An RNA of 177 nucleotides, treated with DMS and 2A3 and read out base by base.
The 2A3 profile rests on 2,492 reads.
Conditions: 150 mM KOAc, 10 mM MgCl2 and 150 mM bicine (pH 8.5), 24 C.
For DMS, 2,963 sequencing reads were counted.
Values cover nucleotides 27 to 126.
High DMS reactivity at an A or C suggests that its Watson-Crick edge is free.

[RMDB]
RNA sequence: GGGAACGACUCGAGUAGAGUCGAAAAUAGUGUCUGAUGAUCUCUAGAUAUACUAGGGUACGAUCACUAGGAUCCAUGGGAUCCGCUAGUCAUGCUGUCACUAGUCCAUGUACUAGGAUCCUAGAGGAGAGUCAAUUAUCUUCGGAUAAUUGACUCUAAAAGAAACAACAACAACAAC
Reactivity to DMS in 0.01 (KOAc 150mM, MgCl2 10mM, bicine 150mM(pH8.5), 24C), signal-to-noise 4, nucleotides 027 to 126: u010a020g000u000g000u010c050u000g010a160u000g000a070u010c010u000c000u000a000g010a260u010a120u010a160c000u000a010g010g000g010u000a140c150g010a060u010c020a020c010u000a030g000g010a130u000c000c000a080u010g010g010g000a020u000c030c120g010c180u000a010g020u000c040a040u000g000c070u000g020u010c270a100c200u010a060g000u000c140c040a000u000g030u000a010c020u010a090g000g000a000u000c010c010u000a050g010a110g020g000
Reactivity to 2A3 in 0.01 (KOAc 150mM, MgCl2 10mM, bicine 150mM(pH8.5), 24C), signal-to-noise 3, nucleotides 027 to 126: u020a010g020u020g050u050c050u040g100a150u130g070a110u100c010u000c010u000a030g040a130u220a070u070a300c020u000a000g000g010g010u040a020c070g030a060u140c020a000c010u000a010g060g010a030u020c010c010a050u080g000g020g010a010u020c050c050g020c130u020a000g020u000c010a010u030g050c020u060g080u180c040a070c280u040a040g020u030c060c010a000u020g030u030a020c000u000a010g040g010a000u020c000c000u000a030g010a020g100g120